Chemical mapping of a 177-nucleotide RNA with 2A3 and DMS. Values are in units of 0.01, from 0 to 300, in steps of 10. The RNA was probed in 150 mM KOAc, 10 mM MgCl2 and 150 mM bicine (pH 8.5) at 24 C. It was measured as part of the RMDB library OK2TRN.

[RMDB]
RNA sequence: GGGAACGACUCGAGUAGAGUCGAAAACACACCAAGAAUCGAAAACGGUUUACAGGUUGUGAAACCGUCUGAAAACCUAGAAGCUAUGAACGCCAGUCGAUUAUUGCUUAGGGGAAUAAUCGACGAAGUCCAGCAGUGAAUUCGUUCACUGCUGGACAAAAGAAACAACAACAACAAC
Reactivity to 2A3 in 0.01 (KOAc 150mM, MgCl2 10mM, bicine 150mM(pH8.5), 24C), signal-to-noise 2, nucleotides 027 to 126: c020a000c000a010c000c010a050a080g090a050a070u110c080g000a050a030a010a120c070g030g010u010u010u070a020c050a040g030g170u120u010g060u060g020a000a020a000c020c020g040u010c040u070g060a070a050a010a000c000c030u110a090g060a140a030g040c130u160a050u220g090a060a060c040g040c070c040a050g020u000c000g020a000u000u010a010u000u040g050c020u070u200a090g000g280g000g000a000a030u020a000a000u010c000g000a000c010g010a010a000
Reactivity to DMS in 0.01 (KOAc 150mM, MgCl2 10mM, bicine 150mM(pH8.5), 24C), signal-to-noise 2, nucleotides 027 to 126: c090a080c130a110c060c020a100a190g040a060a110u010c020g010a100a100a100a060c060g000g010u000u000u000a060c040a240g020g020u040u010g050u000g000a050a020a050c010c000g010u020c040u010g010a140a080a040a070c030c020u000a080g010a080a180g010c040u010a040u010g010a120a120c180g040c040c120a110g020u010c000g000a010u000u000a000u010u000g000c010u000u000a170g040g000g020g000a070a030u000a000a000u000c000g010a020c000g000a020a080